[RMDB]
Background:
Structure probing data (2A3 and DMS) for a 177-nucleotide construct. Source: RMDB library OK2TST, as collected in RNAgym. Conditions: 150 mM KOAc, 10 mM MgCl2 and 150 mM bicine (pH 8.5), 24 C. For 2A3, 1,051 sequencing reads were counted.
RNA sequence: GGGAACGACUCGAGUAGAGUCGAAAAGCAAUCGAUUAAAGGGAACAGUCAAAAUCGAGGGAGCUAAAAAUGCUGUAUUGCCAAUUUUGGCUGCUAGCCUUUUAGCUGAUGAGGGAAUAACGACAUAUGCGGUAAAUAUGUUCGCAUAUUUACCGCAAAAAGAAACAACAACAACAAC
Reactivity to 2A3 in 0.01 (KOAc 150mM, MgCl2 10mM, bicine 150mM(pH8.5), 24C), signal-to-noise 1, nucleotides 027 to 126: g060c020a060a040u120c000g110a110u050u140a140a030a030g060g000g020a090a020c020a040g020u090c010a030a000a030a130u080c020g000a100g010g020g030a000g000c000u020a120a020a000a040a070u060g000c020u020g030u140a090u060u300g010c000c010a090a030u030u150u180u010g000g010c000u000g060c020u050a050g000c000c000u020u000u020u040a010g020c010u000g000a090u110g030a050g110g040g040a020a110u130a090a040c020g070a000c040a050u140a090
Reactivity to DMS in 0.01 (KOAc 150mM, MgCl2 10mM, bicine 150mM(pH8.5), 24C), signal-to-noise 3, nucleotides 027 to 126: g010c120a160a070u000c060g000a080u010u010a040a080a060g000g020g020a120a140c100a070g000u000c060a050a030a050a060u000c070g000a160g000g020g020a030g000c010u000a000a030a060a050a070u000g000c000u010g020u000a070u020u000g010c040c000a040a160u000u000u010u000g000g030c020u000g020c060u000a070g020c000c140u000u000u000u000a010g000c020u000g000a090u010g000a120g000g000g000a120a060u020a060a080c090g000a060c130a090u000a100